[RMDB]
RNA sequence: GGGAACGACUCGAGUAGAGUCGAAAAGGUCUGAUCUUCGGAUCAGACCAACUCUGAUUCCCAAUAGGUGCGUAUCUUGGCUAAGACGGAUAGGCGUUGCCACUCAGGGGGGUUUCGACCCCCCUAAACGACAUCAGCAGUUCGCUGCUGAUGUCGUAAAAGAAACAACAACAACAAC
Reactivity to DMS in 0.01 (KOAc 150mM, MgCl2 10mM, bicine 150mM(pH8.5), 24C), signal-to-noise 1, nucleotides 027 to 126: g020g010u000c000u020g020a000u000c000u000u010c080g080g000a030u000c000a010g000a010c080c000a010a060c130u010c110u010g000a130u000u000c010c010c020a120a110u000a050g000g030u000g010c080g000u000a090u000c000u020u000g000g040c080u000a060a120g010a090c040g020g000a030u000a010g000g030c040g020u030u000g040c010c040a080c210u000c230a020g010g010g000g010g010g020u000u000u010c110g000a030c030c000c000c000c000c000u040a050a030
Structure probing data (DMS) for a 177-nucleotide construct.
The data come from the RNA Mapping Database (RMDB), library M2PK50.
The reactions ran in a buffer of 150 mM KOAc, 10 mM MgCl2 and 150 mM bicine (pH 8.5), at 24 C.
High DMS reactivity at an A or C suggests that its Watson-Crick edge is free.